[RMDB]
The data come from the RNA Mapping Database (RMDB), library TTRDES. The record gives the reactivity of an RNA of 177 nucleotides to 2A3 and DMS. Values cover nucleotides 27 to 126. For DMS the reverse transcriptase was MarathonRT. The reactions ran in a buffer of 150 mM KOAc, 10 mM MgCl2 and 150 mM bicine (pH 8.5), at 24 C.
RNA sequence: GGGAACGACUCGAGUAGAGUCGAAAAGAUAUGGAAUAUGAAUACCAACAGCCACUAUUCGGAAACGAAUAGGUGGACAUGGUACAUAUUCCUAAGUCAAACCAAAUAUGGUUCGCCAUAUUUGGAACAUAUCGUUAUCGUUCGCGAUAACGAUAUGAAAAGAAACAACAACAACAAC
Reactivity to 2A3 in 0.01 (KOAc 150mM, MgCl2 10mM, bicine 150mM(pH8.5), 24C), signal-to-noise 7, nucleotides 027 to 126: g000a010u020a000u040g010g010a010a000u030a000u050g140a300a140u060a060c050c120a300a190c230a280g000c000c000a010c000u000a000u000u000c000g000g020a010a000a000c000g000a010a000u040a080g160g090u060g010g000a020c040a300u300g000g000u000a000c000a000u000a000u010u000c000c000u000a000a000g000u010c010a060a040a120c010c000a000a010a010u020a000u010g030g040u040u090c300g060c130c000a000u010a010u000u010u000g000g010a020a010
Reactivity to DMS in 0.01 (KOAc 150mM, MgCl2 10mM, bicine 150mM(pH8.5), 24C), signal-to-noise 6, nucleotides 027 to 126: g010a010u000a030u010g000g000a010a010u000a000u000g000a260a210u000a010c000c010a190a210c120a210g010c000c000a050c000u000a020u000u000c000g030g000a010a010a020c000g010a010a010u000a050g010g030u010g020g000a010c050a070u020g030g020u000a040c000a010u000a010u000u000c000c000u000a000a050g000u000c000a170a130a290c010c010a000a020a010u000a000u000g000g010u000u010c300g030c010c000a010u000a000u000u000u010g010g000a100a150